[RMDB]
RNA sequence: GGGAACGACUCGAGUAGAGUCGAAAAUUAAAUAACGUGAAAAAGCAGAAGGAGGACUGCAAGGACACGAACCACCAAACAUCAAAAACAGCAAGGUGGAGCUGAAGGAGAUGAACCACCAAAAAAACUAAUUAGUUAUCUUCGGAUAACUAAUUAGAAAAGAAACAACAACAACAAC
Reactivity to 2A3 in 0.01 (KOAc 150mM, MgCl2 10mM, bicine 150mM(pH8.5), 24C), signal-to-noise 2, nucleotides 027 to 126: u040u010a020a020a110u190a090a020c040g000u030g050a110a050a050a000a000g020c030a010g030a130a020g080g080a020g010g040a040c000u020g000c040a020a040g050g000a010c000a000c030g020a040a020c020c010a020c010c040a030a100a080c040a040u110c040a060a110a050a020a120c000a000g060c010a060a140g000g020u030g000g020a020g000c010u030g040a070a030g060g060a140g030a040u070g020a050a030c010c000a020c030c030a170a060a020a010a010a020a020
Reactivity to DMS in 0.01 (KOAc 150mM, MgCl2 10mM, bicine 150mM(pH8.5), 24C), signal-to-noise 2, nucleotides 027 to 126: u000u010a080a090a080u000a100a070c070g000u010g000a080a070a100a190a050g000c040a040g010a160a020g010g000a150g000g020a160c030u000g020c040a060a030g010g020a210c020a030c050g000a120a170c060c040a060c080c040a080a070a060c120a030u020c090a040a060a090a140a130c050a020g000c000a040a030g020g050u000g000g030a150g010c030u000g010a060a060g000g020a180g010a090u010g000a040a160c060c000a030c010c020a000a010a060a130a080a060a110